Chemical mapping of a 177-nucleotide RNA with 2A3.
The RNA was probed in 150 mM KOAc, 10 mM MgCl2 and 150 mM bicine (pH 8.5) at 24 C.
The 2A3 profile rests on 543 reads.
[RMDB]
RNA sequence: GGGAACGACUCGAGUAGAGUCGAAAAACUGCGUGGGGUGUCGGUCUGACCACUUGACGUCUUACCAAUCUUCAUUCACACUGGGCGCAUGGCGCUGCAGCCGGUGACUCGCCGAUCGGUGCCCGAAAUCGAACGCUGUCUUCGGACAGCGUUCGAUAAAAGAAACAACAACAACAAC
Reactivity to 2A3 in 0.01 (KOAc 150mM, MgCl2 10mM, bicine 150mM(pH8.5), 24C), signal-to-noise 1, nucleotides 027 to 126: a000c000u030g090c040g110u000g000g080g000g040u040g010u050c040g000g000u000c010u100g070a080c000c000a070c000u060u140g050a120c060g000u000c000u000u080a050c000c000a150a290u080c010u090u010c070a140u130u100c020a030c000a000c110u070g010g040g010c030g000c020a160u200g140g000c070g000c130u070g060c000a010g020c010c040g000g030u070g030a040c000u000c000g020c020c000g000a000u000c040g000g050u150g080c000c000c060g050a160a100